[RMDB]
RNA sequence: GGGAACGACUCGAGUAGAGUCGAAAAAGAGGUUGGACGUAGGGACAAAUCUGGGGAAUGCAAUUGCUAAGUUGGAGGAUGCCAAGGAAUUGUUGGAGUCAUCGGACCAGAUAUUGAGGAGUAUGAACCUGGCGAUUAACUUCGGUUAAUCGCCAGGAAAAGAAACAACAACAACAAC
Reactivity to DMS in 0.01 (KOAc 150mM, MgCl2 10mM, bicine 150mM(pH8.5), 24C), signal-to-noise 1, nucleotides 027 to 126: a000g010a060g000g020u010u050g000g000a070c160g000u000a040g000g000g000a090c220a000a000a060u020c000u000g000g000g000g060a070a090u000g000c150a000a140u020u010g030c070u010a130a150g000u010u000g040g000a150g000g000a140u000g000c000c000a000a140g000g070a110a120u000u000g000u060u000g000g000a100g000u000c020a000u020c020g000g000a060c060c030a100g000a060u000a200u030u000g000a060g000g000a060g000u040a140u000g000a100a090
Structure probing data (DMS) for a 177-nucleotide construct.